[RMDB]
RNA sequence: GGGAACGACUCGAGUAGAGUCGAAAAUGUCCCCACUGGGAUGGAGUUUACCGCCUAGACAUGCAGUCUUAACUCAGAAAUAUGGAGAUAGCCUCGAAGGACAGGACAGGUACUGGGCACGUGUGGGCUCAAGUGACCGAUUCGUCGGUCACUUGAGAAAAGAAACAACAACAACAAC
Reactivity to DMS in 0.01 (KOAc 150mM, MgCl2 10mM, bicine 150mM(pH8.5), 24C), signal-to-noise 2, nucleotides 027 to 126: u000g010u000c040c000c000c160a070c080u000g000g010g000a070u010g030g010a100g010u000u000u000a080c050c070g000c010c030u000a060g010a100c070a090u000g010c170a090g010u000c060u000u000a090a110c060u000c020a070g020a080a060a100u000a110u010g000g010a040g000a050u000a060g010c050c050u010c050g010a070a060g000g010a110c020a060g000g000a070c080a030g000g000u000a020c060u000g010g000g020c030a030c130g030u020g010u010g000g010g000
Reactivity to 2A3 in 0.01 (KOAc 150mM, MgCl2 10mM, bicine 150mM(pH8.5), 24C), signal-to-noise 1, nucleotides 027 to 126: u120g020u000c020c000c060c010a050c050u080g100g000g090a090u090g000g030a060g080u020u000u120a050c020c010g000c000c020u040a040g050a080c010a100u170g020c040a060g020u000c020u050u080a130a040c000u020c100a040g200a080a210a080u300a180u150g020g020a060g060a080u050a050g010c000c000u050c050g060a100a020g040g010a020c020a040g050g000a020c020a040g050g000u060a080c020u040g000g020g000c000a010c100g050u110g000u110g020g050g000